Background: Structure probing data (DMS and 2A3) for a 170-nucleotide construct. It was measured as part of the RMDB library 15KLIB. Reactivities are given for positions 27 through 129.
RNA sequence: GGGAACGACUCGAGUAGAGUCGAAAAGGGACCCAGAACUCUCUCUAGAUUCCCAGAGUGAAUCGAGAGAAAACUGGCUCUCCCUUAGCCAUCCGAGUGGACGUCUGUCCUCCUUCGGAUGCCCAGGUAGCCCCCUAGUUCGCUAGGGGGAAAAGAAACAACAACAACAAC
Reactivity to DMS in 0.01 (KOAc 150mM, MgCl2 10mM, bicine 150mM(pH8.5), 24C), signal-to-noise 9, nucleotides 027 to 129: g000g000g000a000c230c000c000a000g020a090a270c180u020c030u020c010u000c000u030a120g000a000u010u010c010c040c180a120g000a140g030u090g000a020a010u000c000g000a010g000a000g030a020a020a060a180c010u000g000g000c010u020c070u010c000c000c000u030u000a060g030c280c000a010u000c010c020g010a020g030u010g010g000a010c030g030u040c220u110g000u000c010c000u010c090c090u070u020c000g000g030a000u010g010c000c000c000a110g030g010u070a080g020
Reactivity to 2A3 in 0.01 (KOAc 150mM, MgCl2 10mM, bicine 150mM(pH8.5), 24C), signal-to-noise 9, nucleotides 027 to 129: g000g000g000a020c040c000c000a010g020a050a040c010u000c000u000c010u020c020u090a090g000a010u000u020c010c030c150a090g060a040g100u300g020a010a000u000c010g000a000g010a000g000a030a020a010a020c000u000g000g000c010u000c000u000c000c000c000u000u000a020g040c010c000a000u000c000c000g000a010g020u020g010g010a010c030g180u160c270u300g020u010c040c010u020c030c060u080u040c000g010g000a010u010g000c000c000c000a030g050g060u110a050g010